[RMDB]
RNA sequence: GGGAACGACUCGAGUAGAGUCGAAAACGUGCGAAAACUUCAUAGCGCAACAUGAAUCUGGAGGCGCGGCUACGGACAGGGAGACCAUUACGACGGUGGAGAGUGUGUGGGCCACCCUUGAACCCAAACGCAUCGCCGGAGGAGAAGCUCGGUACCAAGUUACCCUCACAUUCGUGUGAGGGUAACUAAAAGAAACAACAACAACAAC
Reactivity to 2A3 in 0.01 (KOAc 150mM, MgCl2 10mM, bicine 150mM(pH8.5), 24C), signal-to-noise 1, nucleotides 027 to 156: c010g020u030g000c000g160a100a030a040a010c080u040u030c060a080u150a130g020c060g000c080a080a080c040a150u120g080a050a070u140c230u080g040g050a050g080g060c000g000c010g000g000c020u020a020c010g000g090a020c010a030g000g020g020a050g040a050c000c000a000u050u070a030c120g000a010c020g050g010u020g040g050a100g000a010g000u070g000u060g000u010g130g000g000c030c000a070c000c040c000u000u080g030a050a060c010c000c000a040a130a000c040g000c010a010u040c110g000c040c000g020g030a020g040g060a070g040a010a000g000c020u020c020g000g020u030a060c000c000a050